Structure probing data (2A3 and DMS) for a 177-nucleotide construct. For DMS the reverse transcriptase was MarathonRT.
RNA sequence: GGGAACGACUCGAGUAGAGUCGAAAAGAUCUUUGACAUAUUUGGUAAGCGAUAGUAACAAGAGAUAAUCAAGUGGGGACGCGCAUCCCCACCAGUGACUAACCGCCCUUCGGGGCACUAUCGUUAGGUAAAUUGGAAUAUUCGUAUUCCAAUUUACAAAAGAAACAACAACAACAAC
Reactivity to 2A3 in 0.01 (KOAc 150mM, MgCl2 10mM, bicine 150mM(pH8.5), 24C), signal-to-noise 8, nucleotides 027 to 126: g040a050u050c040u080u100u110g050a050c050a060u220a200u130u180u220g150g020u130a080a020g000c010g000a000u010a010g040u050a080a060c080a120a040g050a010g020a140u100a110a050u120c020a080a020g000u000g000g000g000g000a010c020g060c030g010c300a060u010c000c000c000c000a000c010c000a010g040u010g040a010c020u030a050a030c030c060g000c000c000c010u020u040c170g030g000g000g000c000a000c000u000a000u000c000g020u030u020a040g050
Reactivity to DMS in 0.01 (KOAc 150mM, MgCl2 10mM, bicine 150mM(pH8.5), 24C), signal-to-noise 9, nucleotides 027 to 126: g010a080u010c020u000u010u010g020a130c130a090u010a070u010u010u020g000g010u010a100a120g000c000g010a010u000a000g010u000a090a110c300a070a070g010a070g010a110u010a080a100u000c020a100a110g010u000g000g000g000g010a040c030g020c240g010c190a290u000c000c000c000c000a000c010c060a050g010u000g000a070c080u010a060a120c090c080g010c000c000c010u000u030c180g030g010g010g010c000a010c000u000a000u000c010g000u000u010a060g010